[RMDB]
RNA sequence: GGGAACGACUCGAGUAGAGUCGAAAAAUCGGCGCCGUAGCGCUACGCGAUAUCGUAUAGCGCUAAUGCUAAUAUGCCGUAUAUAGCAUAUUAAUGCCGAUCGAUAUAUGCUAUAUAAUUAGCGCGCGGCCUUACGAGUGUUCGCACUCGUAAGGCCAAAAGAAACAACAACAACAAC
Reactivity to 2A3 in 0.01 (KOAc 150mM, MgCl2 10mM, bicine 150mM(pH8.5), 24C), signal-to-noise 1, nucleotides 027 to 126: a000u040c000g030g010c010g020c030c020g040u000a010g000c020g000c010u050a010c040g000c010g130a260u050a160u300c010g030u020a020u030a090g000c020g000c000u000a050a020u110g010c010u040a010a030u000a100u190g070c010c000g210u040a060u030a010u040a140g000c010a000u000a000u120u050a140a080u230g040c020c000g010a040u080c010g040a000u020a000u020a000u300g020c040u000a010u010a010u030a120a160u000u000a030g030c000g000c040g050c050

Structure probing data (2A3) for a 177-nucleotide construct. Values cover nucleotides 27 to 126. 2A3 adducts were read by reverse transcription with SuperScript II with manganese. The 2A3 profile rests on 744 reads. Conditions: 150 mM KOAc, 10 mM MgCl2 and 150 mM bicine (pH 8.5), 24 C.